RNA sequence: GGGAACGACUCGAGUAGAGUCGAAAACGAGUAUUCGCGUUAUAUCGUAGACGGGGCGGCGGUUGCUGAAAUGAAAGGAAUCAUUGAACGCCAUCAGGCCAAAUGAUUUUUACCGUUGCAUCAUGUCCGUUGUAUGCUUGUUCGCAAGCAUACAACGAAAAGAAACAACAACAACAAC
Reactivity to 2A3 in 0.01 (KOAc 150mM, MgCl2 10mM, bicine 150mM(pH8.5), 24C), signal-to-noise 1, nucleotides 027 to 126: c020g010a020g080u100a080u090u140c030g000c010g070u000u110a240u020a030u300c070g030u050a020g030a030c000g030g000g000g000c000g020g070c010g010g000u020u030g080c060u030g070a070a070a190u110g030a170a020a010g000g010a020a020u030c000a000u000u070g030a050a040c080g000c030c000a060u200c110a060g010g000c000c030a050a010a000u030g020a020u000u020u030u070u020a050c010c020g000u000u020g040c020a090u070c000a070u190g050u000c000
Reactivity to DMS in 0.01 (KOAc 150mM, MgCl2 10mM, bicine 150mM(pH8.5), 24C), signal-to-noise 2, nucleotides 027 to 126: c040g010a070g010u000a070u010u000c050g000c090g020u010u000a090u000a090u000c050g010u020a100g000a030c040g040g000g000g000c040g000g010c040g000g020u010u020g000c090u000g000a040a110a130u000g040a040a150a200g000g000a010a000u000c000a030u000u000g000a080a120c300g000c020c000a120u010c260a090g040g000c000c070a060a050a010u000g000a010u000u000u000u030u000a060c040c010g030u000u000g000c010a060u000c020a070u010g030u000c050